[RMDB]
RNA sequence: GGGAACGACUCGAGUAGAGUCGAAAAGCCGGUGGUGCCCGAAGGCUCGGCCGGUAUCGAGCGCACGUUCGUCGCCUAUCUGAAGAUGGCCGGCAAGACCGCGCAGGACACCUCGUUCGACGGUCGGGAUUCGGUCUACUUUCGAGUAGACCGAAUCAAAAGAAACAACAACAACAAC
Reactivity to DMS in 0.01 (KOAc 150mM, MgCl2 10mM, bicine 150mM(pH8.5), 24C), signal-to-noise 2, nucleotides 027 to 126: g000c000c010g010g120u000g010g000u000g020c000c000c100g100a130a160g010g030c030u010c080g010g000c000c000g000g010u000a030u010c050g000a190g000c010g000c250a070c070g020u030u000c050g010u020c050g030c080c140u010a000u030c090u000g000a210a180g030a140u030g000g010c040c000g040g000c000a030a050g000a200c010c050g000c130g020c070a150g000g000a130c020a060c060c010u020c050g020u080u010c060g000a190c070g000g000u000c090g000g000
Reactivity to 2A3 in 0.01 (KOAc 150mM, MgCl2 10mM, bicine 150mM(pH8.5), 24C), signal-to-noise 4, nucleotides 027 to 126: g070c030c020g030g000u150g000g070u070g020c040c020c040g090a100a040g040g010c020u000c030g070g000c000c010g010g020u050a110u050c040g040a030g030c050g020c020a030c120g070u220u170c040g000u080c030g010c020c010u130a120u150c070u170g070a100a060g030a130u070g080g000c010c000g020g000c020a050a010g030a040c030c000g030c050g000c120a040g020g050a020c000a060c050c070u100c070g010u020u050c030g030a080c040g010g030u050c000g040g080